[RMDB]
The data come from the RNA Mapping Database (RMDB), library OK2TST. An RNA of 177 nucleotides, treated with DMS and 2A3 and read out base by base.
RNA sequence: GGGAACGACUCGAGUAGAGUCGAAAACGCUUCCAGCUCUUUUUGCAGCUCCGCCAGCGGGCGGGUGAUGCGGCGUACCGCCUGAUAGCAGAUAAAUAGCGUCAGGCUGACCAUAAAGACGCCGGGACAUUACUGCAGGUUUCGACCUGCAGUAAUGAAAAGAAACAACAACAACAAC
Reactivity to DMS in 0.01 (KOAc 150mM, MgCl2 10mM, bicine 150mM(pH8.5), 24C), signal-to-noise 3, nucleotides 027 to 126: c080g000c190u010u000c010c010a200g010c030u010c010u000u000u010u010u010g020c030a060g010c020u000c020c010g010c000c010a250g040c260g030g040g000c000g010g010g020u000g010a060u000g010c020g000g000c100g010u010a140c110c130g020c010c000u000g000a010u000a080g050c010a070g000a190u010a100a080a200u010a160g020c010g000u000c000a010g000g000c010u000g000a080c040c080a110u010a000a020a060g000a040c120g020c000c010g010g000g000a140
Reactivity to 2A3 in 0.01 (KOAc 150mM, MgCl2 10mM, bicine 150mM(pH8.5), 24C), signal-to-noise 2, nucleotides 027 to 126: c040g030c060u080u010c030c020a030g000c010u010c000u030u160u060u140u170g000c010a030g050c010u020c020c010g000c000c020a160g210c230g140g070g010c010g000g030g000u110g060a080u080g000c000g060g000c100g010u050a160c020c070g000c000c010u000g020a020u050a110g010c010a070g030a150u170a180a220a060u150a080g000c000g000u030c010a000g000g020c000u000g020a030c000c030a060u100a070a090a010g030a020c120g000c020c000g060g000g000a020
The reactions ran in a buffer of 150 mM KOAc, 10 mM MgCl2 and 150 mM bicine (pH 8.5), at 24 C. The DMS profile rests on 2,608 reads. Reactivities are given for positions 27 through 126. In probing experiments dimethyl sulfate is read out at A N1 and C N3, which are open when not base-paired.